[RMDB]
RNA sequence: GGGAACGACUCGAGUAGAGUCGAAAAUCAACACACUGAUAUCGUUUGUAGUGUCAUGAAGUUCACGGGAUUACACUAGUGAGAAUCACGACAACGUAAACGAACGGUGAGAUGUCAUGAUGUGGAAUCCGUACUGGACCUUCGGGUCUAGUACGGAAAAAGAAACAACAACAACAAC
Reactivity to DMS in 0.01 (KOAc 150mM, MgCl2 10mM, bicine 150mM(pH8.5), 24C), signal-to-noise 5, nucleotides 027 to 126: u040c050a080a080c110a080c030a000c010u000g000a120u010a070u000c000g030u000u000u000g000u010a130g010u010g000u000c030a110u000g000a010a080g000u030u010c010a000c020g020g000g030a210u030u040a110c250a120c010u010a120g010u000g000a030g000a040a080u010c000a020c050g000a020c020a030a060c020g000u020a040a020a020c000g010a040a060c020g000g010u000g000a050g000a050u010g010u000c070a100u000g010a110u020g040u010g000g000a130a130
Reactivity to 2A3 in 0.01 (KOAc 150mM, MgCl2 10mM, bicine 150mM(pH8.5), 24C), signal-to-noise 8, nucleotides 027 to 126: u080c010a010a060c010a000c000a000c020u040g040a100u110a100u130c020g020u040u010u040g070u050a240g050u000g000u000c010a020u020g030a040a010g070u050u020c000a000c000g030g020g060a100u140u300a110c170a090c110u110a220g020u000g020a000g030a020a050u020c000a000c030g010a010c000a080a020c040g110u130a030a030a000c020g000a070a050c010g020g020u040g030a110g030a070u110g040u050c080a040u110g090a050u060g040u060g090g060a090a050